[RMDB]
RNA sequence: GGGAACGACUCGAGUAGAGUCGAAAAGAGGACGUUCUACUGGCUGUUACCGGAGUAGUUCGUCCGAAGCAGUGGCUGUAACCGGACUGCAAACACUUGUCGGCUGUUAUGUCACGACUUGUGGAGAGGGUACGAUCUCGUUCGCGAGGUCGUACCCAAAAGAAACAACAACAACAAC
Reactivity to DMS in 0.01 (KOAc 150mM, MgCl2 10mM, bicine 150mM(pH8.5), 24C), signal-to-noise 3, nucleotides 027 to 126: g000a190g000g000a010c020g000u020u000c000u010a000c000u010g010g040c030u020g010u000u030a110c160c020g000g020a040g000u000a000g020u000u010c040g010u000c000c010g010a040a050g010c030a070g010u010g000g000c040u000g000u030a060a100c020c010g000g010a070c010u000g010c040a230a060a080c010a010c030u010u000g010u000c010g000g000c050u010g000u060u070a090u030g000u010c070a210c010g000a000c000u000u010g040u030g000g000a050g010a220
Reactivity to 2A3 in 0.01 (KOAc 150mM, MgCl2 10mM, bicine 150mM(pH8.5), 24C), signal-to-noise 6, nucleotides 027 to 126: g140a050g000g010a010c010g000u000u010c000u010a000c010u050g190g010c040u080g110u300u070a140c090c070g030g000a040g010u000a000g010u000u000c010g000u000c000c000g000a040a000g010c010a000g000u050g080g050c030u090g050u170a090a040c010c010g010g040a030c020u020g000c000a000a040a000c000a000c010u000u020g000u010c000g000g030c020u050g140u300u130a190u200g110u100c050a010c210g010a000c000u010u020g020u010g030g040a080g020a030